[RMDB]
RNA sequence: GGGAACGACUCGAGUAGAGUCGAAAAUCGCCGUGUUCCAGGGAAUGUUCGCUUGCAUUACGUGAGUUCAGUUCAAGCAUUUCCGUCCCGUUCGAAGAUAGGGCAACUGACAACUCGAAAGUGUAGCGCUUGCCGUCGGUGCUGUGGCUGAACGUGGUGACGUAUGACAUUUCGAUGUCAUACGUCAAAAAGAAACAACAACAACAAC
Reactivity to DMS in 0.01 (KOAc 150mM, MgCl2 10mM, bicine 150mM(pH8.5), 24C), signal-to-noise 1, nucleotides 027 to 156: u000c030g020c020c020g020u010g010u010u000c030c050a120g020g020g000a100a060u010g000u010u000c100g010c000u000u000g060c050a100u010u000a090c070g030u000g000a030g060u000u000c020a030g060u000u010c060a070a100g010c030a080u000u000u050c060c010g020u000c020c000c050g000u000u000c080g000a130a130g010a110u000a080g000g000g000c070a040a110c060u010g020a140c070a070a080c010u000c040g020a100a110a160g010u010g010u000a020g050c090g050c040u000u040g000c000c030g000u000c000g030g020u000g020c000u010g010u000g000g020c040u000g000a070a080c000g040u000g030g000
Reactivity to 2A3 in 0.01 (KOAc 150mM, MgCl2 10mM, bicine 150mM(pH8.5), 24C), signal-to-noise 2, nucleotides 027 to 156: u100c030g000c040c010g100u060g010u160u000c030c030a060g010g000g000a070a060u060g040u120u120c080g000c050u070u120g000c020a090u120u050a090c080g130u140g050a000g010u040u030c020a020g020u080u020c060a010a040g020c060a110u000u090u020c060c010g040u030c000c020c010g020u110u160c130g050a090a040g020a060u120a080g010g000g120c000a010a000c020u050g040a060c070a070a010c070u040c050g080a080a060a050g100u120g050u080a030g040c050g000c010u020u030g020c010c070g040u040c040g000g010u080g010c020u050g070u120g070g000c010u050g100a030a000c020g020u070g010g040
The record gives the reactivity of an RNA of 207 nucleotides to DMS and 2A3.
DMS adducts were read by reverse transcription with MarathonRT.
The RNA was probed in 150 mM KOAc, 10 mM MgCl2 and 150 mM bicine (pH 8.5) at 24 C.
The 2A3 profile rests on 967 reads.
Reactivities are given for positions 27 through 156.